[RMDB]
RNA sequence: GGGAACGACUCGAGUAGAGUCGAAAACGGCGCGUCACGUAAUCGGCAUAUUGAUGCCAACUAAUUGGUGCCACACGGCUGGCACUACACGACUACGUGACAUAUUAGCACGCUAUAUGACUGCGUACGGUGUGUGCAUCAUGAUAUACCGAUUGUACCUUUAAACCAUGUUCGCAUGGUUUAAAGGAAAAGAAACAACAACAACAAC
Reactivity to 2A3 in 0.01 (KOAc 150mM, MgCl2 10mM, bicine 150mM(pH8.5), 24C), signal-to-noise 7, nucleotides 027 to 156: c030g060g020c060g040c060g050u030c010a010c020g020u020a040a020u060c050g000g030c040a010u070a130u100u250g160a050u040g010c020c020a050a040c080u110a100a140u090u140g010g000u000g010c020c010a010c010a020c020g210g030c160u010g000g010c000a000c000u040a020c040a020c060g050a020c020u010a000c000g000u000g000a000c010a000u060a060u010u100a020g010c030a010c080g020c010u040a050u010a030u240g070a090c110u100g020c010g050u040a050c060g070g020u070g010u010g020u030g060c020a050u060c020a020u130g110a020u050a020u030a110c020c000g030a030u000u110g060u110a100
Reactivity to DMS in 0.01 (KOAc 150mM, MgCl2 10mM, bicine 150mM(pH8.5), 24C), signal-to-noise 2, nucleotides 027 to 156: c040g020g030c040g050c090g030u000c010a060c040g010u000a030a040u000c010g030g000c080a070u010a150u000u000g020a100u010g010c020c010a050a050c060u000a070a170u000u010g000g050u000g010c060c020a040c020a120c200g010g050c070u010g000g000c010a030c020u000a040c130a090c050g030a090c020u000a000c010g010u000g040a000c010a120u000a030u010u010a120g020c040a060c000g010c010u000a100u010a090u000g020a180c090u000g020c040g030u000a070c040g000g000u010g020u010g020u000g050c000a100u000c110a170u000g000a100u000a060u000a050c020c020g000a130u000u010g000u000a090